[RMDB]
RNA sequence: GGGAACGACUCGAGUAGAGUCGAAAAAGACGGAAACCCAUCGACUGUCACCAGAUGCUGCAUGACCUGAUCACUGAUGGCUCAACGGUAUCCGGCGGUACAACUGAAUACUUGUAGCUGCCUUUUGAAAAGGAGUUCAUCUUCGGAUGAACUCCAAGCAGUGAAUUUUGUUCGCAAAAUUCACUGCAAAAGAAACAACAACAACAAC
Reactivity to 2A3 in 0.01 (KOAc 150mM, MgCl2 10mM, bicine 150mM(pH8.5), 24C), signal-to-noise 2, nucleotides 027 to 156: a000g040a020c030g010g000a100a070a000c000c010c020a040u080c040g050a020c040u050g000u050c020a010c000c030a010g030a130u080g040c050u000g020c060a100u060g040a100c010c030u050g030a090u090c050a020c100u110g000a040u070g040g000c030u020c050a020a060c000g080g010u030a020u020c040c040g020g000c010g000g030u080a040c040a030a000c040u130g090a080a110u130a120c020u010u060g000u020a020g040c000u020g010c020c020u130u170u050u080g040a110a160a030a010g000g000a010g050u000u000c000a020u000c010u080u100c170g120g000a000u000g000a000a010c000u000c000c000a000a000
Structure probing data (2A3) for a 207-nucleotide construct. Source: RMDB library M2RFPK, as collected in RNAgym.